[RMDB]
RNA sequence: GGGAACGACUCGAGUAGAGUCGAAAAUAGCAACAACAUAAUGGAGGCAGUCAAUCAAUAUAGAUUGAUCCGAAAUCUUAUUCCAAUCCAAUAUAUCACCUAUGGGUAUGGGUACAUAAGAAAUGUACGAAUCCGCAUAAUUCGUUAUGCGGAUUCGAAAAGAAACAACAACAACAAC
Reactivity to DMS in 0.01 (KOAc 150mM, MgCl2 10mM, bicine 150mM(pH8.5), 24C), signal-to-noise 1, nucleotides 027 to 126: u000a110g040c000a060a060c040a020a110c040a070u000a050a080u000g000g020a230g000g030c300a050g010u000c000a040a030u000c010a080a120u000a230u010a070g030a010u000u000g000a030u000c000c010g000a140a200a030u030c030u000u000a080u000u000c000c010a080a080u010c010c010a050a130u000a030u010a080u030c120a090c080c120u000a140u030g020g000g000u000a060u000g000g000g020u000a000c130a040u000a020a050g000a020a150a000u020g010u000a130
Reactivity to 2A3 in 0.01 (KOAc 150mM, MgCl2 10mM, bicine 150mM(pH8.5), 24C), signal-to-noise 1, nucleotides 027 to 126: u170a040g040c050a000a050c000a030a000c010a100u160a120a070u060g090g020a040g060g000c100a030g100u000c020a050a000u060c000a180a000u120a070u060a300g010a000u000u000g020a010u000c000c010g030a040a030a020u020c010u100u060a040u180u030c020c000a030a010u060c030c010a090a040u080a000u030a080u170c040a020c100c030u040a120u080g060g000g040u080a140u040g050g000g000u050a000c000a030u000a000a010g120a050a170a020u180g000u120a040
Structure probing data (DMS and 2A3) for a 177-nucleotide construct. Values cover nucleotides 27 to 126. The reactions ran in a buffer of 150 mM KOAc, 10 mM MgCl2 and 150 mM bicine (pH 8.5), at 24 C. 2A3 adducts were read by reverse transcription with SuperScript II with manganese. High DMS reactivity at an A or C suggests that its Watson-Crick edge is free. Source: RMDB library OK2TRN, as collected in RNAgym.